[RMDB]
RNA sequence: GGGAACGACUCGAGUAGAGUCGAAAAUCAUCCAAGUUCGCUUGGAUGAAACGGUACUGAAGCUAAAAACGAUCCGAGGCAACAGUAGCAUAAAAGGAUCGACAGCCUGCAAAUUCGUUUGCAGGAAAUGCUCAGCAUUGUUCGCAAUGCUGAGCAUAAAAGAAACAACAACAACAAC
Reactivity to DMS in 0.01 (KOAc 150mM, MgCl2 10mM, bicine 150mM(pH8.5), 24C), signal-to-noise 1, nucleotides 027 to 126: u000c000a010u000c000c000a000a010g030u000u010c110g010c000u000u000g010g000a010u000g000a020a030a100c100g010g010u000a050c000u020g000a070a300g030c020u000a040a100a020a030a070c020g000a000u000c020c010g030a090g000g000c010a010a220c000a050g020u000a030g000c080a050u020a040a070a070a060g000g020a010u010c010g030a250c170a110g000c000c000u010g000c000a010a000a050u010u010c240g020u010u000u000g020c000a000g020g010a000a030
Reactivity to 2A3 in 0.01 (KOAc 150mM, MgCl2 10mM, bicine 150mM(pH8.5), 24C), signal-to-noise 1, nucleotides 027 to 126: u000c020a000u000c010c010a010a030g020u030u020c140g000c080u000u010g000g010a000u000g000a000a000a010c030g060g040u070a040c010u020g140a040a030g060c020u080a120a010a000a030a170c050g000a000u000c010c000g050a060g080g050c000a070a020c010a080g080u060a080g150c020a000u180a130a150a000a030g010g000a000u000c010g020a020c010a010g030c000c000u000g000c010a000a000a030u060u040c110g070u090u030u000g010c020a000g000g020a060a000